[RMDB]
RNA sequence: GGGAACGACUCGAGUAGAGUCGAAAACAGGAAUCAAAGUUGAAAUGCAAGAAGAGCGUACUCAGCAAAAAAACCGUGAUAAAGCGAUGAAAAUCAUUCGUGCUCGUGUUGCUGACCAUUUUGCGCAAAUUGCUCAAGAUGAGCAAGAUGCUGAACACGGACCCUAAUCAUUCGUGAUUAGGGUCCGAAAAGAAACAACAACAACAAC
Reactivity to 2A3 in 0.01 (KOAc 150mM, MgCl2 10mM, bicine 150mM(pH8.5), 24C), signal-to-noise 2, nucleotides 027 to 156: c000a040g010g110a030a090u120c150a090a260a050g010u010u040g040a010a050a120u240g030c050a020a080g030a020a000g000a130g050c030g000u000a020c020u020c100a010g000c070a040a000a000a040a000a140a130c000c000g050u000g050a060u040a110a110a030g010c010g040a020u020g090a030a030a080a120u150c060a040u090u100c000g030u030g040c030u010c000g130u150g070u120u010g030c000u000g010a040c000c020a090u090u130u100u230g050c000g000c000a000a130a000u010u030g000c000u000c000a040a200g060a280u300g000a050g000c000a000a000g020a010u020g010c050u060g030a030a000c040a000